[RMDB]
Source information
Structure probing data (DMS and 2A3) for a 207-nucleotide construct. The reactions ran in a buffer of 150 mM KOAc, 10 mM MgCl2 and 150 mM bicine (pH 8.5), at 24 C. The DMS profile rests on 2,157 reads. Reactivities are given for positions 27 through 156. It was measured as part of the RMDB library RNAMAK. For DMS the reverse transcriptase was MarathonRT.
RNA sequence: GGGAACGACUCGAGUAGAGUCGAAAAGAGACAUUCGUGUCUCCGCUCACCUUUGUGUAUUUCACUACAGGGAGCCUUGCUGGUCCCAUUGGGACCAACAAGGCGAAGAACUGUAGAAAUGAAAUACACUCUGGUUUACUAUCUCAUUCGUGAGAAACUACUGAAAUUUAUUCGUAAAUUUCAGUAGAAAAGAAACAACAACAACAAC
Reactivity to DMS in 0.01 (KOAc 150mM, MgCl2 10mM, bicine 150mM(pH8.5), 24C), signal-to-noise 1, nucleotides 027 to 156: g060a020g000a040c000a090u000u020c300g000u000g000u000c010u010c020c030g010c130u000c050a040c020c020u000u010u050g020u000g000u010a020u010u000u000c000a110c010u020a000c000a010g020g010g000a300g010c000c000u000u000g050c000u000g040g070u020c000c000c000a270u020u010g110g090g010a020c000c010a000a000c000a000a000g000g010c000g000a020a090g000a090a110c000u010g000u000a000g020a080a070a050u000g010a010a060a020u000a010c000a000c000u000c020u000g010g040u000u010u040a090c090u000a150u010c000u000c000a090u000u010c260g030u000g010a030g010a080a270a210
Reactivity to 2A3 in 0.01 (KOAc 150mM, MgCl2 10mM, bicine 150mM(pH8.5), 24C), signal-to-noise 3, nucleotides 027 to 156: g000a010g010a000c030a010u070u100c280g060u130g010u040c000u000c010c020g030c020u020c000a020c000c000u000u000u000g010u000g000u000a000u000u010u000c010a020c010u000a000c010a010g000g010g020a020g000c000c000u010u010g000c010u000g000g000u000c000c020c000a070u120u240g030g000g010a000c020c010a000a000c000a020a000g010g000c040g000a030a000g020a030a010c000u000g000u010a010g000a140a170a010u070g000a000a000a000u000a000c000a010c000u010c000u000g010g000u010u040u110a150c050u050a120u060c000u010c010a070u140u160c200g100u080g040a030g030a190a060a030